[RMDB]
RNA sequence: GGGAACGACUCGAGUAGAGUCGAAAAAACAACGAGGCAGAAGAAUCAUAGGAACCGAUGAUCAAGGCUUCCCAAUAUAUGAACAGUAAGUGAAUAAAAAACAACGUCAGAAGACAUUAAUCGCCCCAAAAGUUCAGUGAUUCGUCACUGAACUUUUAAAAGAAACAACAACAACAAC
Reactivity to DMS in 0.01 (KOAc 150mM, MgCl2 10mM, bicine 150mM(pH8.5), 24C), signal-to-noise 1, nucleotides 027 to 126: a060a040c070a080a160c140g000a060g000g040c060a030g000a090a080g000a060a050u020c030a040u030a140g030g030a030a090c140c030g000a080u000g000a040u000c040a090a090g000g000c060u000u000c010c010c010a110a120u010a050u000a030u000g000a070a030c100a050g050u000a030a090g000u000g000a060a120u030a000a070a100a030a070a040c130a060a060c070g030u010c060a030g000a140a080g000a040c030a030u000u010a130a020u020c100g020c080c020c040c300
An RNA of 177 nucleotides, treated with DMS and read out base by base. It was measured as part of the RMDB library OK2TRN. Values are in units of 0.01, from 0 to 300, in steps of 10.